[RMDB]
This 177-nucleotide RNA was probed chemically with DMS and 2A3. The 2A3 profile rests on 47,652 reads. Reactivities are rounded to 0.1 and cut off at 0 and 3. For DMS, 78,360 sequencing reads were counted. 2A3 adducts were read by reverse transcription with SuperScript II with manganese. Conditions: 150 mM KOAc, 10 mM MgCl2 and 150 mM bicine (pH 8.5), 24 C.
RNA sequence: GGGAACGACUCGAGUAGAGUCGAAAAGAUGAGAGUUCAACUGUAGCUGUUUAGUUGGAUUAGAACAGCUUUUAAUCGUUGUACGUAAGUGUACAACGUGAAGAGUGAGCUCUUCACAACUCUCAGAGAUAGGUUUGUUCUUCGGGACAGAUCUAUCAAAAGAAACAACAACAACAAC
Reactivity to DMS in 0.01 (KOAc 150mM, MgCl2 10mM, bicine 150mM(pH8.5), 24C), signal-to-noise 9, nucleotides 027 to 126: g010a160u010g010a010g000a010g010u000u000c060a040a070c070u010g010u020a020g010c000u000g000u000u000u010a090g020u020u020g020g020a210u030u030a110g010a010a010c000a010g000c000u000u010u020u020a070a140u010c030g010u000u000g000u000a000c000g010u040a080a160g020u050g010u000a000c000a000a010c000g000u000g000a080a080g000a060g010u010g010a070g000c000u000c000u010u010c030a030c080a070a060c090u000c000u000c020a090g010a200
Reactivity to 2A3 in 0.01 (KOAc 150mM, MgCl2 10mM, bicine 150mM(pH8.5), 24C), signal-to-noise 9, nucleotides 027 to 126: g120a120u070g000a000g000a000g000u000u040c050a150a080c080u090g050u150a010g000c010u010g050u010u010u020a130g060u130u230g200g070a220u140u160a070g020a020a000c000a000g000c000u020u030u010u060a030a020u070c010g000u000u000g000u000a000c000g010u040a040a060g090u070g000u130a000c000a000a000c010g000u010g030a050a040g100a010g050u040g040a020g010c010u000c000u040u060c000a000c000a010a070c010u010c000u000c040a010g030a000